This 177-nucleotide RNA was probed chemically with 2A3 and DMS. The RNA was probed in 150 mM KOAc, 10 mM MgCl2 and 150 mM bicine (pH 8.5) at 24 C. DMS adducts were read by reverse transcription with MarathonRT.
[RMDB]
RNA sequence: GGGAACGACUCGAGUAGAGUCGAAAAAGGCCUAUCAAACCCGGAGAUAUCUCGUUCUCCCCGAAAUAGCUUUAGGGCUAGCGUCGCGCGUUAACCCCGGGAGGUAGAGCACCGGAUCGAUGAGGGGUUUGAACACUCAAUUCGUUGAGUGUUCAAAAAAAGAAACAACAACAACAAC
Reactivity to 2A3 in 0.01 (KOAc 150mM, MgCl2 10mM, bicine 150mM(pH8.5), 24C), signal-to-noise 6, nucleotides 027 to 126: a000g080g010c010c000u060a080u060c050a050a090a050c010c000c000g070g000a080g030a050u150a100u050c030u020c020g060u140u010c020u030c010c000c000c000g060a030a050a100u090a030g030c050u130u100u150a120g060g000g000c010u010a020g020c020g070u060c030g020c020g000c010g060u050u060a050a050c010c000c000c010g010g020g000a030g030g020u090a020g010a020g030c000a010c010c020g010g000a030u030c030g040a030u040g050a010g000g030g000g000
Reactivity to DMS in 0.01 (KOAc 150mM, MgCl2 10mM, bicine 150mM(pH8.5), 24C), signal-to-noise 6, nucleotides 027 to 126: a070g020g000c010c020u010a070u010c040a060a140a110c060c000c000g010g000a100g010a100u030a070u030c070u000c020g000u010u010c030u000c000c010c020c030g000a040a060a090u010a030g000c030u000u020u020a080g010g010g010c010u000a020g030c120g010u000c080g010c160g010c060g010u020u020a080a120c040c020c010c030g000g000g010a060g010g000u020a070g000a090g010c180a100c010c020g000g000a080u010c140g010a080u020g000a120g000g000g010g010
Reactivities are rounded to 0.1 and cut off at 0 and 3. Source: RMDB libraries RFM100 and RFMREP, as collected in RNAgym.